[RMDB]
RNA sequence: GGGAACGACUCGAGUAGAGUCGAAAAGUUGCGGCCGACAUGGUGGCGUACGAUGUUAUAGUCCGGGGUGAGGAGGGUUCCCUAGACACGCUGGCCGAUGUGCUAGCCAAGCUGAGGGGGUCUAGGCCCAUCUGAGCUAAUUCGUUAGCUCAGAUGGAAAAGAAACAACAACAACAAC
Reactivity to 2A3 in 0.01 (KOAc 150mM, MgCl2 10mM, bicine 150mM(pH8.5), 24C), signal-to-noise 3, nucleotides 027 to 126: g080u090u110g120c020g030g020c020c020g020a190c070a180u180g070g020u060g060g100c060g020u050a010c040g040a060u130g080u220u140a160u130a140g050u010c050c020g000g010g030g020u130g070a060g040g090a040g020g000g020u070u130c010c010c010u000a000g020a010c030a010c120g000c030u000g000g000c010c030g090a260u260g020u110g000c000u010a020g010c020c040a150a030g000c080u100g050a150g000g000g000g020g000u020c000u010a000g040g000c000
Reactivity to DMS in 0.01 (KOAc 150mM, MgCl2 10mM, bicine 150mM(pH8.5), 24C), signal-to-noise 4, nucleotides 027 to 126: g020u000u010g010c080g010g010c030c040g020a120c140a080u010g010g030u000g010g020c070g030u000a040c050g000a090u010g010u000u010a100u000a150g010u000c040c030g000g000g000g010u010g010a150g000g010a150g000g010g000u000u000c050c000c000u000a030g000a050c080a110c250g000c010u000g010g020c010c020g000a150u000g010u010g010c020u010a020g020c010c240a060a050g000c100u000g010a140g010g010g000g010g000u000c020u010a060g000g020c300